The data come from the RNA Mapping Database (RMDB), library TTRDEL. An RNA of 177 nucleotides, treated with DMS and 2A3 and read out base by base. For DMS, 922 sequencing reads were counted. 2A3 adducts were read by reverse transcription with SuperScript II with manganese. Conditions: 150 mM KOAc, 10 mM MgCl2 and 150 mM bicine (pH 8.5), 24 C.
RNA sequence: GGGAACGACUCGAGUAGAGUCGAAAAGAUAUGGAAUCGAACACCGCUGUACGAAGAACUCGGAAACGAGGGAGUACAGAACUACGGUUCCCGAUUCCUAAGUCAAACUCCCUCUUCGGAGGGAGAAGUUGCUAUCAACGUUCGCGUUGAUAGCAACAAAAGAAACAACAACAACAAC
Reactivity to DMS in 0.01 (KOAc 150mM, MgCl2 10mM, bicine 150mM(pH8.5), 24C), signal-to-noise 1, nucleotides 027 to 126: g010a040u000a290u050g000g000a000a010u020c000g030a060a140c280a030c000c020g000c000u000g030u010a010c000g000a140a110g000a080a180c010u010c000g000g000a070a150a130c000g010a000g010g000g000a080g010u000a000c010a050g000a050a030c120u000a240c010g000g000u010u000c120c140c000g030a060u010u000c000c000u000a010a230g000u000c030a100a080a110c020u000c000c000c000u000c000u000u000c160g000g000a010g000g000g000a000g000a000a000
Reactivity to 2A3 in 0.01 (KOAc 150mM, MgCl2 10mM, bicine 150mM(pH8.5), 24C), signal-to-noise 2, nucleotides 027 to 126: g030a000u050a050u160g030g000a040a000u000c000g010a070a020c030a030c080c010g030c030u010g000u000a000c030g070a300a080g030a190a060c000u000c010g020g020a050a040a040c000g010a000g010g070g040a020g000u000a010c000a000g040a050a040c080u220a050c020g010g020u010u020c040c010c010g010a020u000u000c020c000u030a070a070g040u010c020a000a000a190c010u020c000c060c000u020c020u050u050c290g190g010a000g000g000g000a010g000a020a010